[RMDB]
RNA sequence: GGGAACGACUCGAGUAGAGUCGAAAAGACUGAACUUCUGAGGUCUGGGCUGGACAAUGUUCACAAAAUGCAAAUGCCUUUGUGGGUCCCUUGUGCAUAACAGGGAGAGGAUUUGCCAAAUGGAGACUCACCACAGGGUAUUCGUACCCUGUGGUGAAAAAGAAACAACAACAACAAC
Reactivity to 2A3 in 0.01 (KOAc 150mM, MgCl2 10mM, bicine 150mM(pH8.5), 24C), signal-to-noise 1, nucleotides 027 to 126: g040a010c020u000g020a140a110c000u130u080c030u110g030a000g020g030u010c000u050g060g020g000c030u060g000g000a000c100a070a150u140g030u090u040c060a030c040a060a180a070a030u130g000c010a000a070a070u180g130c000c000u080u080u060g090u060g020g010g000u020c000c020c010u050u040g000u000g010c030a010u100a300a000c000a000g070g000g030a070g000a010g000g000a000u090u040u030g020c050c010a030a050a030u130g040g010a100g030a050c000
Reactivity to DMS in 0.01 (KOAc 150mM, MgCl2 10mM, bicine 150mM(pH8.5), 24C), signal-to-noise 2, nucleotides 027 to 126: g050a140c030u000g010a090a090c170u000u000c060u010g020a140g010g000u020c020u000g010g000g020c040u020g010g000a070c060a090a050u000g010u000u000c030a140c060a020a040a060a090u000g000c020a020a020a030u010g000c010c030u010u000u000g000u000g020g000g000u000c020c010c000u000u000g000u000g010c270a090u000a120a020c030a030g010g010g000a080g010a010g000g000a080u000u000u000g020c010c210a030a040a080u000g000g010a090g020a130c110